[RMDB]
The record gives the reactivity of an RNA of 177 nucleotides to 2A3 and DMS. Conditions: 150 mM KOAc, 10 mM MgCl2 and 150 mM bicine (pH 8.5), 24 C. For 2A3, 3,415 sequencing reads were counted. It was measured as part of the RMDB library OK2TST.

RNA sequence: GGGAACGACUCGAGUAGAGUCGAAAAAGUCACUGGCAGGCAACUUGGGAGACAAUGUAUCACAAGACUUUAACAUAGACCAGGCCUGCUGUUAGGGCUCCAGACAUUCUCUCUCACCUAAGCCUCAAAGCUAUUAUGUGUUCGCACAUAAUAGCUUAAAAGAAACAACAACAACAAC
Reactivity to 2A3 in 0.01 (KOAc 150mM, MgCl2 10mM, bicine 150mM(pH8.5), 24C), signal-to-noise 3, nucleotides 027 to 126: a000g040u030c020a020c100u050g010g000c010a010g010g010c020a100a050c090u070u080g010g000g030a080g020a020c040a070a110u100g030u090a060u120c040a030c040a270a040g090a080c040u080u150u130a130a000c040a060u080a040g090a060c020c030a010g050g010c000c010u000g000c000u000g000u010u040a020g000g010g020c030u040c040c000a020g020a020c020a040u080u000c020u000c000u000c000u010c010a040c030c020u060a100a030g010c000c020u040c050a030
Reactivity to DMS in 0.01 (KOAc 150mM, MgCl2 10mM, bicine 150mM(pH8.5), 24C), signal-to-noise 6, nucleotides 027 to 126: a070g020u000c050a120c080u010g000g020c040a030g010g020c030a120a090c080u000u010g020g010g000a070g020a070c100a100a070u010g010u000a070u000c090a070c140a070a060g000a120c060u000u000u010a060a090c140a100u010a080g010a150c040c060a080g000g010c020c010u000g000c040u000g000u010u000a060g010g010g010c030u010c040c050a090g000a070c080a040u010u000c080u010c030u000c020u000c040a040c080c050u000a070a090g010c030c020u000c130a080